This 177-nucleotide RNA was probed chemically with DMS and 2A3. Values are in units of 0.01, from 0 to 300, in steps of 10.
RNA sequence: GGGAACGACUCGAGUAGAGUCGAAAAACUGCCAGUACGCUGGCAGAAGAUUUCCAAUAAUUGAGACAGUAAUUUCUAAAAAGCUGUCUACAUUAAUGAAAAGAACAGCCUCCUUACGAGGAGGCAAUGCCUUAGAAAGUUUCGACUUUCUAAGGCAAAAAGAAACAACAACAACAAC
Reactivity to DMS in 0.01 (KOAc 150mM, MgCl2 10mM, bicine 150mM(pH8.5), 24C), signal-to-noise 2, nucleotides 027 to 126: a000c030u070g000c000c010a000g000u000a100c300g070c020u000g000g070c000a000g000a020a110g000a190u000u020u000c000c000a060a120u000a020a040u020u000g030a040g010a000c000a010g000u060a070a180u000u060u050c220u000a140a060a150a110a270g030c000u000g010u000c000u000a040c010a000u000u000a080a060u000g000a120a100a030a040g000a140a070c180a080g000c000c000u040c000c000u000u000a090c170g020a000g000g000a000g030g000c010a020a030
Reactivity to 2A3 in 0.01 (KOAc 150mM, MgCl2 10mM, bicine 150mM(pH8.5), 24C), signal-to-noise 3, nucleotides 027 to 126: a000c000u000g000c000c000a030g010u060a020c190g000c090u000g000g000c000a000g000a000a000g000a010u080u000u000c000c000a030a090u170a070a000u040u080g000a000g000a020c000a010g050u040a050a160u080u190u060c200u230a190a050a010a000a020g030c000u000g000u020c000u000a020c000a000u030u110a070a110u150g120a150a040a030a060g020a050a010c030a010g000c000c000u010c000c020u040u030a040c180g030a020g000g000a000g000g000c000a000a030